[RMDB]
RNA sequence: GGGAACGACUCGAGUAGAGUCGAAAAAUUUUAAGAAUUCUUGCUCAAUUUUGGUGAAUAAAAAAAAUCCCUUGGUGACGCCGGCCACCUCAUCGUUUUUACAGGGUCUAGUACUUCGUCUAGGAGAAUUUAGUAGACACUUCGGUGUCUACUAAAUAAAAGAAACAACAACAACAAC
Reactivity to DMS in 0.01 (KOAc 150mM, MgCl2 10mM, bicine 150mM(pH8.5), 24C), signal-to-noise 2, nucleotides 027 to 126: a060u010u010u020u030a080a110g010a160a080u000u000c050u010u000g000c040u010c070a040a080u020u010u020u030g000g010u020g010a060a070u030a000a000a010a010a040a080a100a060u000c020c000c000u000u010g000g010u010g000a040c030g000c060c090g020g000c060c030a070c030c020u000c060a070u000c040g000u020u020u030u020u010a080c110a090g000g010g020u000c010u010a030g010u030a070c030u000u000c060g010u010c030u020a080g000g010a050g010a110
Reactivity to 2A3 in 0.01 (KOAc 150mM, MgCl2 10mM, bicine 150mM(pH8.5), 24C), signal-to-noise 2, nucleotides 027 to 126: a000u100u090u040u070a070a060g040a040a080u090u040c020u080u110g030c000u030c150a140a230u050u070u140u160g050g020u040g080a100a040u260a170a050a050a010a000a010a020a070u060c010c010c000u020u070g000g000u020g010a020c020g000c020c020g020g010c000c000a020c000c040u020c000a110u030c020g050u030u010u050u100u020a060c040a080g030g020g000u000c000u010a050g020u010a090c010u030u080c050g100u040c100u060a050g010g130a110g080a100

About this RNA:
Conditions: 150 mM KOAc, 10 mM MgCl2 and 150 mM bicine (pH 8.5), 24 C. The record gives the reactivity of an RNA of 177 nucleotides to DMS and 2A3. For DMS, 3,074 sequencing reads were counted. For 2A3, 1,651 sequencing reads were counted. Values are in units of 0.01, from 0 to 300, in steps of 10.